[RMDB]
RNA sequence: GGGAACGACUCGAGUAGAGUCGAAAAUGGUUCAACGCUGACAAAGGCUUCGGCUUCAUCACUCCUGACGAUGGCUCUAAAGAUGUGUUCGUACACUUCUCUGCUAUCCAGAACGAUGGUUACAAAUACUUGUUUAUAAGUUCGCUUAUAAACAAGUAAAAGAAACAACAACAACAAC
Reactivity to DMS in 0.01 (KOAc 150mM, MgCl2 10mM, bicine 150mM(pH8.5), 24C), signal-to-noise 8, nucleotides 027 to 126: u000g020g020u010u010c050a090a080c130g020c070u000g010a070c120a080a130a120g000g000c030u000u010c100g010g010c030u000u000c040a030u010c030a100c140u000c080c020u000g000a110c170g010a050u000g010g010c010u000c120u000a050a110a050g000a050u000g000u000g010u000u010c240g010u010a080c040a030c020u000u000c010u010c050u000g000c020u000a040u000c020c040a050g000a070a090c170g000a040u000g010g020u000u000a070c110a060a070a140u010
Reactivity to 2A3 in 0.01 (KOAc 150mM, MgCl2 10mM, bicine 150mM(pH8.5), 24C), signal-to-noise 8, nucleotides 027 to 126: u100g020g010u050u060c030a060a020c060g000c050u040g020a040c060a050a170a050g030g010c000u040u040c040g050g000c000u070u040c020a040u030c000a010c030u030c010c010u020g020a040c040g020a030u030g010g000c010u000c030u150a150a170a010g020a030u040g010u000g010u060u180c090g080u180a010c020a010c010u040u030c030u000c010u040g010c000u010a030u010c000c000a010g010a080a000c050g010a050u040g010g070u100u090a050c050a030a070a010u030
The record gives the reactivity of an RNA of 177 nucleotides to DMS and 2A3. The RNA was probed in 150 mM KOAc, 10 mM MgCl2 and 150 mM bicine (pH 8.5) at 24 C. Source: RMDB library RFMREP, as collected in RNAgym.